[RMDB]
RNA sequence: GGGAACGACUCGAGUAGAGUCGAAAAGUCGUGACCGGAUUCCUUGACUCACUUUGUGUGCGCGUUGAUUGCGCACGGCCACCUUCCGCUCAGACCGGCGCGGAGGUGUAGCGAUAGGACAGCAGCGUGACUGCUCGGUGUUCGCACCGAGCAGUCAAAAAGAAACAACAACAACAAC
Reactivity to DMS in 0.01 (KOAc 150mM, MgCl2 10mM, bicine 150mM(pH8.5), 24C), signal-to-noise 1, nucleotides 027 to 126: g000u030c000g080u090g000a300c010c000g050g030a070u070u000c000c010u000u000g000a040c000u070c080a050c000u000u010u000g090u000g000u000g030c120g020c010g020u000u000g000a140u060u050g000c050g050c000a000c000g000g000c050c000a000c000c000u010u000c120c000g100c000u010c040a070g000a100c200c220g030g010c300g020c010g020g000a010g060g000u000g010u020a070g000c000g100a190u000a100g000g000a010c150a000g000c050a000g000c130g030
Reactivity to 2A3 in 0.01 (KOAc 150mM, MgCl2 10mM, bicine 150mM(pH8.5), 24C), signal-to-noise 2, nucleotides 027 to 126: g010u020c000g010u000g020a040c030c040g010g090a080u030u070c000c000u010u000g030a010c010u040c020a160c020u000u150u180g040u010g050u030g050c020g010c060g080u200u160g300a210u080u080g090c000g000c040a000c000g000g010c000c000a000c000c000u070u010c000c000g020c000u050c060a160g070a130c000c070g000g070c040g000c040g000g000a000g000g040u030g000u000a000g000c090g090a080u010a060g010g010a010c000a000g020c000a000g020c040g060